The data come from the RNA Mapping Database (RMDB), library OK2TRN. Chemical mapping of a 177-nucleotide RNA with DMS and 2A3. DMS adducts were read by reverse transcription with MarathonRT. For DMS, 1,654 sequencing reads were counted. For 2A3, 1,332 sequencing reads were counted.

[RMDB]
RNA sequence: GGGAACGACUCGAGUAGAGUCGAAAAGGGCCUUGGCUGGGCAUGGUGGCUCAAGCCUAUAAUCCCAGCACUUUGGGAGGCCGAGGCAGGAGGGUUGCUUGAGGCCAGAGUUUAAGAUCAGCCUGGACACGUAGCUGUGUUUCGACACAGCUACGUGAAAAGAAACAACAACAACAAC
Reactivity to DMS in 0.01 (KOAc 150mM, MgCl2 10mM, bicine 150mM(pH8.5), 24C), signal-to-noise 2, nucleotides 027 to 126: g000g010g010c010c010u000u000g030g000c010u000g010g000g010c070a110u010g010g020u010g010g020c030u000c050a050a140g010c030c000u000a120u020a050a070u000c000c000c020a010g000c060a130c090u000u000u000g000g000g000a080g020g020c040c020g000a050g020g010c020a070g030g000a080g000g010g000u000u000g000c090u010u020g010a090g050g020c040c010a080g000a080g020u000u000u000a040a120g010a120u000c060a120g000c050c020u020g010g000a260
Reactivity to 2A3 in 0.01 (KOAc 150mM, MgCl2 10mM, bicine 150mM(pH8.5), 24C), signal-to-noise 1, nucleotides 027 to 126: g040g000g000c000c020u020u010g000g010c000u030g000g000g010c040a040u030g020g000u020g040g000c030u020c050a030a000g010c000c010u040a070u060a060a030u010c030c000c020a030g030c150a270c170u160u130u040g070g010g000a000g000g000c000c000g030a000g000g020c010a020g000g060a060g000g000g020u080u090g000c010u020u130g030a070g000g000c000c010a050g010a050g050u120u170u090a160a070g040a120u070c010a000g040c020c010u030g010g010a000